Annotation:
Structure probing data (DMS and 2A3) for a 207-nucleotide construct. It was measured as part of the RMDB library OK3TST. The reactions ran in a buffer of 150 mM KOAc, 10 mM MgCl2 and 150 mM bicine (pH 8.5), at 24 C. For DMS, 6,857 sequencing reads were counted.

RNA sequence: GGGAACGACUCGAGUAGAGUCGAAAAAAAAUCGAAGAUGAUCGGAGGAAGGUAAAUCGUAUGAUGAAAAAGUCUCCGUUUAGGGACGAGUGGGGCGACUUAAAAGACGGAUGGAUAUUUGUCCGAUUCCUUCUCGUUAGCAUAGCCCUUGUGGCGGCGUAAGAGGGGUAUUCGUACCCCUCUUACGAAAAGAAACAACAACAACAAC
Reactivity to DMS in 0.01 (KOAc 150mM, MgCl2 10mM, bicine 150mM(pH8.5), 24C), signal-to-noise 3, nucleotides 027 to 156: a070a040a080a050u010c050g000a080a130g020a090u000g010a060u000c010g050g020a130g020g000a090a060g000g020u000a050a050a060u010c040g010u010a070u010g020a070u000g000a040a040a060a060a110g010u000c000u000c010c030g030u000u000u000a080g010g000g010a080c040g010a080g020u010g010g010g010g010c020g010a080c040u010u000a060a070a060a080g000a060c050g020g020a050u000g010g010a100u000a190u000u000u010g020u000c020c020g000a150u000u000c010c000u000u000c000u000c030g010u010u010a070g020c040a070u000a140g000c000c000c020u000u000g020u000g000g020c010g020g000
Reactivity to 2A3 in 0.01 (KOAc 150mM, MgCl2 10mM, bicine 150mM(pH8.5), 24C), signal-to-noise 5, nucleotides 027 to 156: a010a010a000a020u080c050g030a060a030g070a090u080g020a020u050c040g030g000a020g010g000a030a020g020g010u100a030a040a060u050c030g020u120a070u260g040a050u060g030a030a060a010a000a030g060u030c030u030c050c020g000u050u040u070a050g000g000g010a010c000g010a020g020u070g000g020g000g020c030g020a040c020u100u160a040a050a060a040g050a010c020g020g020a010u070g070g040a020u060a090u180u150u150g030u020c020c010g040a080u090u150c010c010u040u040c050u020c010g080u060u070a030g020c040a060u050a030g000c000c010c030u020u120g040u050g020g000c020g030g010